[RMDB]
RNA sequence: GGGAACGACUCGAGUAGAGUCGAAAACCCUUAGCAUUCGUGCUAAGGGAAAUAAGGGUCGGCUCAUGCAGCUAGUCGAAAAUGCUGCUCGACCUUUUGGUAAAAUCUGGCCGUUCGCGGCCAGAAACCUUUAAGAUUUCUUCGGAAAUCUUAAAGGAAAAGAAACAACAACAACAAC
Reactivity to DMS in 0.01 (KOAc 150mM, MgCl2 10mM, bicine 150mM(pH8.5), 24C), signal-to-noise 1, nucleotides 027 to 126: c000c000c010u000u000a020g020c000a050u000u010c160g020u010g030c000u000a010a000g020g020g000a000a040a040u000a020a040g010g000g000u000c010g020g020c130u010c180a130u010g000c010a010g010c010u000a220g000u030c260g020a090a090a100a100u000g000c010u010g000c010u010c000g000a000c000c000u000u000u000u000g020g000u010a060a030a120a150u000c000u000g030g010c000c000g010u000u000c200g010c030g000g000c020c000a000g010a010a100a100
Reactivity to 2A3 in 0.01 (KOAc 150mM, MgCl2 10mM, bicine 150mM(pH8.5), 24C), signal-to-noise 1, nucleotides 027 to 126: c010c010c000u010u000a000g040c000a020u000u040c210g080u080g020c000u000a000a000g000g000g010a000a120a030u140a000a020g000g000g000u010c000g000g030c080u060c300a040u190g030c000a000g000c000u070a040g240u200c110g080a090a040a060a040u110g000c000u000g010c000u000c000g010a000c000c000u020u030u030u030g000g000u090a010a030a010a100u000c000u000g040g000c080c020g010u010u010c220g000c020g120g050c000c000a000g030a010a000a000